[RMDB]
RNA sequence: GGGAACGACUCGAGUAGAGUCGAAAAGGUUUUUUCCGAACAGCACGGAAAACGUGCCCCUUCGUGUGAACUGCAUUUCACAGGGCUGGUUCGAGAGUGUCCGGGAUCGGUUCUUAUCAAGAGGGGCUACCGUGAUGUUGUUCGCAACAUCACGGUAAAAAGAAACAACAACAACAAC
Reactivity to DMS in 0.01 (KOAc 150mM, MgCl2 10mM, bicine 150mM(pH8.5), 24C), signal-to-noise 2, nucleotides 027 to 126: g020g040u010u000u000u000u000u000c000c020g000a060a110c120a140g020c150a120c000g000g000a040a010a030a030c150g010u010g010c010c000c000c000u000u000c170g010u000g000u000g000a010a030c110u000g030c230a080u010u000u000c040a110c080a110g020g000g010c010u000g020g020u010u010c150g010a100g010a160g020u000g000u010c020c020g010g000g000a010u000c020g010g000u000u000c000u000u000a070u020c120a050a110g000a030g000g010g000g020c030
Reactivity to 2A3 in 0.01 (KOAc 150mM, MgCl2 10mM, bicine 150mM(pH8.5), 24C), signal-to-noise 1, nucleotides 027 to 126: g080g000u070u050u010u000u060u000c000c000g030a100a010c050a020g120c010a000c020g020g010a000a050a000a070c050g060u080g000c020c020c010c000u050u060c060g090u060g000u010g030a010a010c000u040g020c100a100u020u060u130c150a280c010a110g010g000g000c010u040g100g000u190u110c100g060a050g000a020g300u090g020u040c030c000g030g050g000a000u010c030g000g000u030u030c030u060u100a100u150c030a050a020g010a000g040g020g000g020c020

Annotation:
Chemical mapping of a 177-nucleotide RNA with DMS and 2A3. The 2A3 profile rests on 1,149 reads. The RNA was probed in 150 mM KOAc, 10 mM MgCl2 and 150 mM bicine (pH 8.5) at 24 C. The data come from the RNA Mapping Database (RMDB), library OK2TST.